[RMDB]
RNA sequence: GGGAACGACUCGAGUAGAGUCGAAAAAGCGUAGCGGUACGCCGCUACGCAAGGCGCAUUUGAACUGUAUUGUACGCCUUGCAUAAAGCAAAAGUACUAAAAAAACGUGCCGUUGCGACGGCACGAAAAAACAUCCAUUGGUUCGCCAAUGGAUGAACACUUCACAUUAGUUCGCUAAUGUGAAGUGAAAAGAAACAACAACAACAAC
Reactivity to DMS in 0.01 (KOAc 150mM, MgCl2 10mM, bicine 150mM(pH8.5), 24C), signal-to-noise 2, nucleotides 027 to 156: a060g000c010g020u000a020g030c010g000g030u000a060c200g040c060c020g010c010u000a000c010g030c000a000a000g000g000c000g040c030a030u000u010u000g020a100a270c090u000g010u000a300u010u010g030u000a010c000g030c000c000u000u000g000c020a130u010a050a100a100g000c070a040a040a080a140g020u000a120c090u030a000a000a040a040a060a030a110c000g000u000g030c000c020g030u010u000g040c190g010a170c020g040g030c030a020c010g000a000a010a040a140a050a060c000a000u010c000c000a030u000u000g000g040u000u000c300g000c020c000a000a020u010g000g000a000u000g000a000a150
Reactivity to 2A3 in 0.01 (KOAc 150mM, MgCl2 10mM, bicine 150mM(pH8.5), 24C), signal-to-noise 7, nucleotides 027 to 156: a000g030c020g000u010a000g010c000g000g020u040a040c200g050c030c000g000c000u000a000c000g000c000a000a000g000g000c010g000c020a090u080u090u300g150a180a100c110u090g040u200a100u120u110g010u050a020c010g010c010c000u000u020g000c030a080u130a210a150a040g020c020a040a020a020a020g040u050a050c110u220a040a060a040a020a020a010a030c010g000u000g000c000c000g000u020u060g050c180g050a000c000g000g000c000a000c000g020a000a000a000a000a000a000c000a000u000c000c000a000u000u010g020g010u040u030c100g030c080c000a000a000u000g000g000a000u000g000a010a000
The data come from the RNA Mapping Database (RMDB), library M2RFPK. Chemical mapping of a 207-nucleotide RNA with DMS and 2A3. For DMS the reverse transcriptase was MarathonRT. For 2A3 the reverse transcriptase was SuperScript II with manganese. For DMS, 4,591 sequencing reads were counted. The 2A3 profile rests on 8,910 reads.